About this RNA: Structure probing data (DMS and 2A3) for a 177-nucleotide construct. For DMS the reverse transcriptase was MarathonRT. Reactivities are given for positions 27 through 126. Conditions: 150 mM KOAc, 10 mM MgCl2 and 150 mM bicine (pH 8.5), 24 C.
RNA sequence: GGGAACGACUCGAGUAGAGUCGAAAACUUUGAGUCGAUGGGGCGGCUUCAUUAAGCGGCGCUAACAAGGCGAACAAAUGCAGGGCCCAGAAGCUUUCUUGCAGCGCCGGCGCCUUAGCAGGGCGCCGAUAGGGGCGAGUUUCGACUCGCCCCUAUCAAAAGAAACAACAACAACAAC
Reactivity to DMS in 0.01 (KOAc 150mM, MgCl2 10mM, bicine 150mM(pH8.5), 24C), signal-to-noise 2, nucleotides 027 to 126: c060u000u010u000g010a070g000u000c020g000a090u030g000g000g000g030c040g000g010c030u000u030c070a130u000u050a080a120g000c070g010g010c030g040c040u000a080a110c160a030a100g000g000c010g000a040a000c110a050a120a070u010g010c030a030g010g000g000c030c040c030a060g000a090a180g030c000u020u000u050c090u020u000g000c180a060g050c000g020c060c020g000g000c020g000c040c000u000u000a050g020c170a130g000g010g010c000g080c000c040
Reactivity to 2A3 in 0.01 (KOAc 150mM, MgCl2 10mM, bicine 150mM(pH8.5), 24C), signal-to-noise 2, nucleotides 027 to 126: c000u040u070u280g000a000g000u020c060g020a110u140g020g000g000g040c020g020g000c000u090u050c060a100u070u130a090a020g040c060g070g000c010g000c010u020a040a010c040a100a030g030g000c000g030a040a060c040a030a080a010u070g040c040a030g000g000g030c010c040c020a010g070a040a030g010c010u080u110u060c050u130u100g000c020a020g030c000g010c010c060g000g000c000g000c010c000u040u010a010g010c040a040g040g000g010c020g000c000c000